[RMDB]
RNA sequence: GGGAACGACUCGAGUAGAGUCGAAAAGAAUUCGUGAUCAAUAGUUUCCGAGCACACCAUGGGUGAUCUUUGACCGUUCAGCAAACUCUGUAUUCAACAAAUGCAAACAAACUGCCUGUCAGUAACACCAGUUUGAUAGGUUCGCCUAUCAAACUGGAAAAGAAACAACAACAACAAC
Reactivity to DMS in 0.01 (KOAc 150mM, MgCl2 10mM, bicine 150mM(pH8.5), 24C), signal-to-noise 2, nucleotides 027 to 126: g010a080a180u010u010c050g020u000g020a060u010c080a090a100u020a130g000u000u000u000c020c020g020a130g010c110a030c120a050c060c080a050u010g030g010g000u000g000a090u000c040u000u000u010g000a050c060c060g020u040u040c070a010g000c040a070a030a090c090u000c010u000g000u000a040u010u000c090a060a070c120a050a070a060u000g010c080a040a060a070c090a020a030a100c050u000g000c080c030u010g000u010c040a040g000u000a070a050c160a110
Reactivity to 2A3 in 0.01 (KOAc 150mM, MgCl2 10mM, bicine 150mM(pH8.5), 24C), signal-to-noise 2, nucleotides 027 to 126: g040a010a110u100u100c030g080u090g000a040u020c030a070a150u070a090g000u000u030u000c000c020g020a030g020c030a020c010a010c070c010a120u100g060g000g050u110g050a070u010c000u100u040u060g070a030c020c000g060u070u040c010a010g000c060a070a030a020c040u030c040u110g100u080a100u070u090c000a010a030c000a070a150a070u070g030c020a000a050a060c030a050a120a000c060u050g050c030c020u080g090u180c030a020g040u060a070a000c000a050